[RMDB]
RNA sequence: GGGAACGACUCGAGUAGAGUCGAAAAGAUAUGGAGGCUCAGAGAUCGACCCACACAGCUAAGACAGACUCUCGGAAACGAGAGUUCGAGCUGUAGUGGGUCGAUCGACGAAGAGCCUCCUAAGUCAGAAUCAAUAUCAGUUCGCUGAUAUUGAUUCAAAAGAAACAACAACAACAAC
Reactivity to DMS in 0.01 (KOAc 150mM, MgCl2 10mM, bicine 150mM(pH8.5), 24C), signal-to-noise 4, nucleotides 027 to 126: g010a060u010a300u010g000g030a030g010g000c010u000c000a060g000a120g000a000u000c000g020a010c010c010c020a010c010a030c000a000g020c000u000a200a070g010a160c300a110g000a030c000u000c000u000c010g000g000a120a100a200c010g010a030g020a030g000u000u000c050g000a040g010c000u010g010u010a050g060u000g000g010g010u000c000g000a000u000c000g020a120c200g020a120a160g000a010g020c000c000u000c000c000u000a020a070g010u000c050a190
Reactivity to 2A3 in 0.01 (KOAc 150mM, MgCl2 10mM, bicine 150mM(pH8.5), 24C), signal-to-noise 1, nucleotides 027 to 126: g040a030u090a060u250g000g000a010g000g000c000u010c010a020g020a010g010a020u000c000g000a010c050c060c000a010c000a000c000a020g040c040u290a300a000g210a170c110a060g090a020c020u000c000u010c030g030g030a140a110a030c020g040a000g000a000g000u020u010c010g020a010g000c000u010g000u070a130g000u030g000g000g020u000c000g020a010u000c000g030a010c000g010a030a030g000a000g000c000c000u020c000c000u010a010a000g000u010c010a030
The record gives the reactivity of an RNA of 177 nucleotides to DMS and 2A3. For DMS, 3,079 sequencing reads were counted. For 2A3 the reverse transcriptase was SuperScript II with manganese. Source: RMDB library TTRINS, as collected in RNAgym.